This 177-nucleotide RNA was probed chemically with 2A3 and DMS.
Values cover nucleotides 27 to 126.
Conditions: 150 mM KOAc, 10 mM MgCl2 and 150 mM bicine (pH 8.5), 24 C.
DMS adducts were read by reverse transcription with MarathonRT.
RNA sequence: GGGAACGACUCGAGUAGAGUCGAAAAGGCACGCAGGAGGUGGGUUUUGUGGCGGCAGGAAGCAGGCAGCGCGGGGCUGCUGGUGGUGGUGGAGGAGGAUGAAGUUCGCCAUUCAAACAACCCUUUCUGCUAAAUCAUCCUUCGGGAUGAUUUAGCAAAAAGAAACAACAACAACAAC
Reactivity to 2A3 in 0.01 (KOAc 150mM, MgCl2 10mM, bicine 150mM(pH8.5), 24C), signal-to-noise 1, nucleotides 027 to 126: g060g030c050a030c080g060c030a020g040g000a020g000g030u090g030g070g000u110u020u070u050g100u070g040g000c000g030g000c000a000g000g150a000a010g060c110a000g080g000c040a000g040c040g040c100g080g030g070g000c000u030g000c030u010g010g020u050g020g000u020g020g010u140g000g000a020g000g040a040g020g000a010u120g120a080a040g010u020u150c010g000c020c010a020u100u100c120a080a040a000c020a030a000c000c000c000u000u030u110c010
Reactivity to DMS in 0.01 (KOAc 150mM, MgCl2 10mM, bicine 150mM(pH8.5), 24C), signal-to-noise 1, nucleotides 027 to 126: g000g000c090a080c070g030c030a030g000g080a110g000g040u000g000g000g000u000u040u020u000g000u020g020g030c020g030g000c110a120g000g000a060a060g010c000a120g000g010c000a030g000c040g040c090g000g000g060g000c000u000g060c000u000g010g040u000g000g000u060g000g000u020g000g000a210g000g020a120g020g000a150u050g010a090a090g000u000u000c100g050c000c010a020u030u000c040a090a100a110c170a160a160c100c050c010u000u010u000c140
It was measured as part of the RMDB library RFM100.